[RMDB]
RNA sequence: GGGAACGACUCGAGUAGAGUCGAAAAGAUAUGGAAUGCUUAUUGUCAGUUCCUAACUCGGAAACGAGUUAGAACUUGGAUUUAUAAGCCACUUCCUAAGUCAAACUCGAACCUUCGGGUUCGAGAAGAAAGGAGCUAUGUUCGCAUAGCUCCUUUCAAAAGAAACAACAACAACAAC
Reactivity to DMS in 0.01 (KOAc 150mM, MgCl2 10mM, bicine 150mM(pH8.5), 24C), signal-to-noise 3, nucleotides 027 to 126: g000a040u000a300u000g000g000a030a010u000g000c010u010u000a000u000u000g020u000c010a030g000u000u010c180c070u010a000a000c000u010c010g010g010a100a110a210c010g000a010g010u000u000a010g000a010a000c000u010u000g010g010a010u000u000u000a010u000a010a000g000c010c070a030c060u000u000c000c000u000a060a180g000u000c020a090a100a140c010u010c000g000a000a000c000c010u000u010c190g030g000g010u000u010c000g010a010g000a040a060
Reactivity to 2A3 in 0.01 (KOAc 150mM, MgCl2 10mM, bicine 150mM(pH8.5), 24C), signal-to-noise 3, nucleotides 027 to 126: g010a040u090a040u110g010g020a010a040u300g000c000u020u010a010u010u040g020u040c010a010g010u020u010c060c000u010a010a000c000u020c000g000g000a070a050a060c010g000a000g010u000u000a010g000a010a000c000u050u140g140g030a040u280u300u040a020u040a000a000g020c000c000a080c020u000u000c000c010u000a130a010g070u030c050a090a020a100c010u010c000g010a010a010c020c010u070u080c300g150g000g000u000u020c010g000a010g000a000a020